[RMDB]
RNA sequence: GGGAACGACUCGAGUAGAGUCGAAAAGAUAUGGACCUCUCAUGCAUUCUGAUGACCUUGACUCGGAAACGAGUCAAGCAAGGAGGGCAUGAGGAGGUCCUAAGUCAAAAGCGAGCUUCGGCUCGCAUCUUGUAAGGAAGUUCGCUUCCUUACAAGAAAAAGAAACAACAACAACAAC
Reactivity to 2A3 in 0.01 (KOAc 150mM, MgCl2 10mM, bicine 150mM(pH8.5), 24C), signal-to-noise 8, nucleotides 027 to 126: g020a020u090a060u180g000g000a010c000c000u000c000u000c010a000u000g010c020a080u060u050c020u060g300a300u140g060a110c020c000u000u000g000a000c000u000c000g010g040a040a070a050c010g000a000g000u000c000a010a000g000c000a050a170g010g010a020g020g100g000c000a010u020g030a140g070g060a030g000g000u000c000c000u000a010a010g030u010c020a030a040a060a090g000c000g010a000g000c010u070u260c300g160g000c020u010c000g000c000a000
Reactivity to DMS in 0.01 (KOAc 150mM, MgCl2 10mM, bicine 150mM(pH8.5), 24C), signal-to-noise 9, nucleotides 027 to 126: g000a050u010a300u010g000g010a020c000c010u000c000u010c000a010u000g010c000a090u010u000c010u000g010a120u010g000a070c300c000u000u000g010a010c000u000c000g000g010a130a110a200c010g010a010g010u000c000a000a010g000c030a060a090g010g010a020g000g000g010c000a010u010g010a040g030g020a010g010g010u000c000c000u000a010a090g010u000c040a080a090a130a100g010c000g000a010g010c000u000u010c230g030g000c000u000c000g010c010a010